[RMDB]
RNA sequence: GGGAACGACUCGAGUAGAGUCGAAAAUAGACCUGAUUCGUCAGGUCUACCAGCGAGGGAGAGACCGAGGGUCCCACGCUCCCAGGGUCGCACGCUCCCAAAGACUUCCUGAAUUCGUUCAGGAAAAUUAAGAGUAUUAGUUCGCUAAUACUCUUAAAAAAGAAACAACAACAACAAC
Reactivity to DMS in 0.01 (KOAc 150mM, MgCl2 10mM, bicine 150mM(pH8.5), 24C), signal-to-noise 9, nucleotides 027 to 126: u000a010g000a010c000c000u000g000a020u000u010c190g020u000c000a000g010g000u000c000u000a010c060c060a110g010c060g000a150g010g010g010a060g010a160g010a050c040c030g020a290g010g010g000u000c030c030c070a080c090g000c070u000c010c010c010a130g000g000g010u000c010g010c130a100c140g010c040u000c000c000c010a080a110a110g000a130c160u000u000c000c000u000g000a020a030u000u010c170g010u000u000c000a010g000g000a000a010a040a100
Reactivity to 2A3 in 0.01 (KOAc 150mM, MgCl2 10mM, bicine 150mM(pH8.5), 24C), signal-to-noise 4, nucleotides 027 to 126: u060a000g000a000c000c000u000g010a020u000u070c130g060u000c090a000g000g000u010c000u000a020c010c000a030g060c020g070a120g000g030g000a060g010a010g020a030c010c040g040a150g030g050g030u060c050c040c020a030c030g050c020u020c010c010c000a030g090g000g010u020c010g000c060a040c080g060c020u010c000c000c010a020a060a010g040a040c050u020u010c000c000u010g010a020a020u080u070c170g040u080u000c040a000g000g000a010a030a010a010